[RMDB]
RNA sequence: GGGAACGACUCGAGUAGAGUCGAAAAAGUGGAAGCACGGACAUUUUGCGUUUAGUGCAGAAUCAUAAGGUAUCUAUUAUUGUUCAGAAAAUGACUCCUGAGCAAUUAGAGGAUGUGGAUUCCUCUCUGCAUUCUACCGUUUCGACGGUAGAAUGCAAAAAGAAACAACAACAACAAC
Reactivity to DMS in 0.01 (KOAc 150mM, MgCl2 10mM, bicine 150mM(pH8.5), 24C), signal-to-noise 1, nucleotides 027 to 126: a090g000u000g000g000a060a160g000c000a050c040g010g010a100c180a080u000u000u030u000g010c050g000u000u030u030a150g000u010g010c000a020g020a080a040u000c090a040u040a110a170g010g000u020a050u000c020u000a060u010u010a030u000u000g000u010u000c020a000g000a020a020a120a150u020g010a070c300u000c070c000u000g010a000g010c020a000a020u000u010a060g000a090g020g020a140u000g030u000g010g010a210u000u000c000c040u010c050u020c100
Reactivity to 2A3 in 0.01 (KOAc 150mM, MgCl2 10mM, bicine 150mM(pH8.5), 24C), signal-to-noise 1, nucleotides 027 to 126: a000g100u050g010g090a040a040g080c020a000c020g030g010a020c020a060u220u270u100u140g060c060g050u070u100u270a280g060u110g080c000a000g030a020a060u050c090a020u060a120a000g050g010u080a070u000c020u000a060u180u010a010u040u040g020u060u020c000a000g050a090a230a100a250u300g100a190c020u060c030c000u020g000a000g000c010a010a010u000u030a040g020a030g090g040a030u100g040u040g150g080a180u120u000c010c010u100c010u020c000